[RMDB]
RNA sequence: GGGAACGACUCGAGUAGAGUCGAAAAUUCGAGAACCUGGCCAUCGAGGCGGAACCCGACGCGUUGCUGACUGUCGAGUUCGGUCGGGUUCUCGAUCUCGGCGACGACCUGUAACGUCUCGUUGGUCGUAUGCCUCGGGGUUCGCCCCGAGGCAUACAAAAGAAACAACAACAACAAC
Reactivity to 2A3 in 0.01 (KOAc 150mM, MgCl2 10mM, bicine 150mM(pH8.5), 24C), signal-to-noise 2, nucleotides 027 to 126: u080u000c030g000a010g050a040a040c020c000u020g040g000c000c030a050u100c020g010a000g000g050c030g000g000a000a010c000c010c010g060a100c080g140c040g010u010u230g140c050u030g200a190c020u070g000u120c000g010a020g020u090u040c010g020g010u010c000g080g000g000u000u030c000u000c000g000a000u000c020u020c010g000g030c030g020a000c010g060a050c000c010u060g100u120a060a000c040g050u000c040u020c070g050u040u080g050g000u070c060

Chemical mapping of a 177-nucleotide RNA with 2A3. For 2A3, 878 sequencing reads were counted. Source: RMDB library OK1LIB, as collected in RNAgym. The reactions ran in a buffer of 150 mM KOAc, 10 mM MgCl2 and 150 mM bicine (pH 8.5), at 24 C.